[RMDB]
RNA sequence: GGGAACGACUCGAGUAGAGUCGAAAAAAAACCUUUCUAUACCAAUGUAUUAAUUGCUAAAUUACAAGCGAUUUAUCGUCGUGUCUAUGAGUUUACAGCUGAAGAAAAACGUACAUUGACUUGGCAAUGUUAACAGGACGUUCGCGUCCUGUUAACAAAAAGAAACAACAACAACAAC
Reactivity to 2A3 in 0.01 (KOAc 150mM, MgCl2 10mM, bicine 150mM(pH8.5), 24C), signal-to-noise 4, nucleotides 027 to 126: a000a000a000a010c110c000u110u070u000c150u100a160u040a100c000c040a030a030u100g030u020a050u130u060a130a030u090u050g030c020u080a080a120a120u230u140a090c040a090a030g000c010g020a030u000u060u150a200u150c080g020u000c010g000u020g120u100c050u100a120u070g030a080g100u070u040u070a120c130a030g040c080u100g080a170a010g130a110a160a000a020a000c050g010u060a010c000a010u020u010g060a040c030u030u040g060g040c020a070a040
Reactivity to DMS in 0.01 (KOAc 150mM, MgCl2 10mM, bicine 150mM(pH8.5), 24C), signal-to-noise 2, nucleotides 027 to 126: a020a010a010a030c030c020u000u010u010c050u040a080u010a060c180c080a070a000u000g010u000a040u000u000a060a070u040u000g000c010u000a110a010a040u000u020a110c130a130a060g000c010g010a040u050u010u020a090u030c070g050u000c000g000u010g000u050c070u010a010u010g000a110g000u010u000u000a090c140a030g020c010u000g000a090a100g000a050a080a050a060a050c210g000u000a050c050a000u000u000g000a120c120u010u000g000g010c100a020a020